[RMDB]
Chemical mapping of a 177-nucleotide RNA with DMS and 2A3. The RNA was probed in 150 mM KOAc, 10 mM MgCl2 and 150 mM bicine (pH 8.5) at 24 C. For 2A3, 2,794 sequencing reads were counted. The DMS profile rests on 1,601 reads. For DMS the reverse transcriptase was MarathonRT. 2A3 adducts were read by reverse transcription with SuperScript II with manganese.

RNA sequence: GGGAACGACUCGAGUAGAGUCGAAAAGGUAGGUACUGCGAGGCAGUGCAAUCGUAGCAUUCGCCGAGGUAUGCUGAUCUGCUAUACCAGCCGAGAUCGCACAUAGCAGCGCAAUCUACCAGAAAAAGGGUAGGUACAAGUUCGCUUGUACCUACCCAAAAGAAACAACAACAACAAC
Reactivity to DMS in 0.01 (KOAc 150mM, MgCl2 10mM, bicine 150mM(pH8.5), 24C), signal-to-noise 1, nucleotides 027 to 126: g000g000u010a000g000g000u000a090c070u000g040c000g000a020g000g000c010a040g000u030g120c000a040a030u040c000g020u010a250g000c180a030u080u080c080g030c000c050g000a150g070g010u000a060u000g000c000u000g040a100u000c090u000g000c010u000a050u000a080c190c130a170g000c290c050g010a190g000a000u000c000g000c000a050c070a170u120a110g000c000a020g020c050g000c030a000a000u000c000u000a030c000c000a290g000a010a080a020a030a040
Reactivity to 2A3 in 0.01 (KOAc 150mM, MgCl2 10mM, bicine 150mM(pH8.5), 24C), signal-to-noise 3, nucleotides 027 to 126: g000g000u000a000g000g000u070a140c090u020g000c020g010a010g050g050c010a000g000u010g000c010a040a000u050c040g070u140a010g040c020a080u140u070c080g000c090c010g020a030g000g070u030a010u010g010c010u030g090a170u100c010u100g000c000u010a010u040a130c020c020a020g020c030c010g030a070g000a060u020c030g000c050a000c000a050u130a010g000c030a000g030c020g000c000a030a000u010c000u020a000c000c010a010g090a020a070a020a010a000